[RMDB]
RNA sequence: GGGAACGACUCGAGUAGAGUCGAAAAACCCAGAGCUCUCUCUAGAUUCCGAUAGAGAAUCGAGAGAAAACUGGCUCUCCCUUAGCCAUCCGAGUGGACGUUGUCCUCCUUCGGAUGCCCAGGUCGGCAUCUAAUGCUCCUUCGGGAGCAUUAGAUGAAAAGAAACAACAACAACAAC
Reactivity to 2A3 in 0.01 (KOAc 150mM, MgCl2 10mM, bicine 150mM(pH8.5), 24C), signal-to-noise 1, nucleotides 027 to 126: a030c000c000c000a030g000a020g020c010u000c000u010c010u010c010u150a160g000a010u010u020c000c020g200a270u170a300g210a050g000a070a000u010c000g010a000g030a020g000a000a020a030a060c050u010g020g030c030u050c010u070c000c010c000u080u100a070g000c020c010a000u020c010c010g000a040g110u020g000g000a030c130g280u160u300g010u100c010c010u000c020c030u110u120c010g020g000a010u000g000c000c050c030a040g020g060u150c030g130g030
Reactivity to DMS in 0.01 (KOAc 150mM, MgCl2 10mM, bicine 150mM(pH8.5), 24C), signal-to-noise 2, nucleotides 027 to 126: a080c180c000c010a050g000a040g010c240u000c090u000c000u000c000u010a110g020a010u000u000c010c010g040a170u040a110g010a190g000a010a000u000c000g010a020g010a020g010a010a030a290a140c050u000g000g020c050u010c030u010c030c000c010u000u010a070g000c130c010a020u000c040c000g010a030g010u000g000g000a020c010g000u020u020g020u020c010c030u000c070c070u000u000c010g030g010a020u000g010c080c050c070a090g010g020u000c150g020g000
An RNA of 177 nucleotides, treated with 2A3 and DMS and read out base by base.
The data come from the RNA Mapping Database (RMDB), library VIROID.
2A3 adducts were read by reverse transcription with SuperScript II with manganese.